[RMDB]
RNA sequence: GGGAACGACUCGAGUAGAGUCGAAAACGCGCCGAACCCGGCGGCCAGACCGAACGUCCGCCGUGAGAUGCCGGUCAUCGGGCUGCACUACCCGCGUCGCGCUGCAGCACACCUUCGAGAGUGCAUCUGUCUCGUCACGUUUCGACGUGACGAGACAAAAAGAAACAACAACAACAAC
Reactivity to 2A3 in 0.01 (KOAc 150mM, MgCl2 10mM, bicine 150mM(pH8.5), 24C), signal-to-noise 1, nucleotides 027 to 126: c010g010c020g040c000c000g000a050a080c000c000c000g030g010c010g040g000c030c000a000g100a060c060c080g050a080a110c010g000u000c020c020g020c020c000g020u050g010a220g020a040u070g100c100c030g000g030u110c020a030u070c000g010g000g000c040u070g040c000a100c070u140a170c000c000c000g030c000g070u100c020g010c000g000c070u100g050c040a000g000c010a000c000a000c050c050u060u190c020g040a070g000a020g080u030g000c020a000u000c000